RNA sequence: GGGAACGACUCGAGUAGAGUCGAAAACAAACCUAAUCUGGCAUAGUUCAUUGCUCUGGUAUAUAUAACAAAAUCAUUAAUCAUUCACAUAAAGAACACUCCAGGGGCCACCUUCUCAGGGGUUGGGCAAGGAUCAAUCAUGGUUCUCUCAGAGACAACCCGUAGUAAUGUUCGCAUUACUACGGGUAAAAGAAACAACAACAACAAC
Reactivity to 2A3 in 0.01 (KOAc 150mM, MgCl2 10mM, bicine 150mM(pH8.5), 24C), signal-to-noise 2, nucleotides 027 to 156: c040a050a070a010c030c000u100a080a090u060c030u080g030g000c000a050u030a110g070u070u070c040a060u100u040g010c020u070c030u060g030g060u000a060u010a040u000a010u070a200a050c090a040a160a060a030u090c030a020u060u180a150a060u090c010a060u130u140c090a080c040a110u170a110a100a040g080a120a000c010a000c060u060c040c030a000g070g010g000g000c030c000a010c030c000u070u060c070u020c050a020g020g000g040g050u060u030g010g010g000c030a050a010g000g010a000u050c040a020a050u060c030a120u120g040g000u040u010c010u000c010u030c040a010g020a000g020a120c020a040

The data come from the RNA Mapping Database (RMDB), library OK3TST. Chemical mapping of a 207-nucleotide RNA with 2A3. The 2A3 profile rests on 558 reads. 2A3 is a SHAPE reagent: it acylates the 2'-hydroxyl of flexible nucleotides of all four kinds.